[RMDB]
RNA sequence: GGGAACGACUCGAGUAGAGUCGAAAAAUAGAGGGAUAUGGAUGCCUAGCUCAUCGAUCGAUUGUAAACUGGUCGGAAACGACCAGGAUGACGGUGGGAGAGCUAAGGCAUCCUAAGUCAAGCAGAACAACAACUCGUAGUUCGCUACGAGUUGUUGAAAAGAAACAACAACAACAAC
Reactivity to 2A3 in 0.01 (KOAc 150mM, MgCl2 10mM, bicine 150mM(pH8.5), 24C), signal-to-noise 3, nucleotides 027 to 126: a010u220a020g080a080g020g130g030a040u010a050u140g010g010a000u010g020c010c010u000a000g000c010u010c010a210u040c070g190a040u030c030g240a300u100u130g120u100a040a120a160c010u000g030g000u000c000g000g040a090a100a050c020g000a000c000c000a000g000g020a000u210g010a000c020g000g000u040g030g130g020a100g000a000g000c000u010a000a030g000g000c010a000u000c000c000u000a020a000g020u020c020a050a050g060c050a050g110a220a030
Reactivity to DMS in 0.01 (KOAc 150mM, MgCl2 10mM, bicine 150mM(pH8.5), 24C), signal-to-noise 2, nucleotides 027 to 126: a040u000a060g000a080g000g000g010a070u000a250u010g010g010a020u000g010c010c010u000a030g010c000u000c000a060u000c020g010a010u000c000g000a190u000u010g050u010a100a140a240c000u000g000g020u000c000g020g000a050a100a140c000g010a020c000c000a010g000g000a120u000g000a030c030g010g000u000g010g000g020a040g000a010g010c000u000a030a040g020g000c000a000u010c000c000u010a000a090g000u000c060a050a140g000c130a080g010a060a190